RNA sequence: GGGAACGACUCGAGUAGAGUCGAAAAAGCUGCUCGAAAUCGGGCCAAAGGACCGGCGUAACGGGAGUGGCUAGCAGCGAGGGUUGCCACUCCAGCCGCGCUAUGGAGCAGGCAUAGCAGAUUUACAAUAGUCGCCUAUAUUCGUAUAGGCGACUAUAAAAGAAACAACAACAACAAC
Reactivity to DMS in 0.01 (KOAc 150mM, MgCl2 10mM, bicine 150mM(pH8.5), 24C), signal-to-noise 1, nucleotides 027 to 126: a080g000c000u000g000c010u010c070g020a040a120a230u000c000g000g000g000c020c010a020a220a160g000g020a080c090c010g010g000c010g000u030a070a060c100g010g020g000a000g040u000g000g010c020u020a070g060c090a020g000c110g000a050g020g000g000u000u000g010c010c000a000c010u000c010c020a050g020c080c040g040c060g010c020u020a080u000g000g000a120g000c080a120g010g000c040a040u000a080g000c010a170g010a090u020u010u000a040c220a080